RNA sequence: GGGAACGACUCGAGUAGAGUCGAAAAGAUAUGGAGCAUGAAACUCGAAGAACUAUUACGUUUAACGUAACAUCUAUCGGAAACGAUAGUGGUUAAACGUAAUAGGGAGAGUUGUGCUCCUAAGUCACAUGUUUAUCAAGUUCGCUUGAUAAACAUGAAAAGAAACAACAACAACAAC
Reactivity to DMS in 0.01 (KOAc 150mM, MgCl2 10mM, bicine 150mM(pH8.5), 24C), signal-to-noise 8, nucleotides 027 to 126: g010a050u010a300u010g000g010a020g020c000a010u010g010a120a050a020c000u000c000g010a170a160g000a140a270c000u000a000u000u000a000c000g010u000u000u000a000a010c000g010u010a060a090c230a030u020c000u000a000u000c000g000g000a110a080a220c020g010a010u000a000g030u000g010g000u000u000a000a010a010c010g010u000a000a000u000a000g000g000g000a060g010a010g020u000u000g010u000g000c000u000c000c000u000a010a050g010u000c030a300
Reactivity to 2A3 in 0.01 (KOAc 150mM, MgCl2 10mM, bicine 150mM(pH8.5), 24C), signal-to-noise 7, nucleotides 027 to 126: g020a000u070a030u170g000g000a010g020c030a010u170g300a260a090a050c020u010c030g220a300a050g000a050a020c000u000a000u000u010a000c000g000u000u000u020a020a010c040g030u040a060a040c040a280u180c010u010a000u000c010g040g010a100a030a040c010g010a010u010a000g010u030g060g000u000u000a000a000a000c000g000u000a000a000u010a000g010g010g010a040g000a000g000u020u090g010u020g000c000u000c000c000u000a130a010g010u000c010a010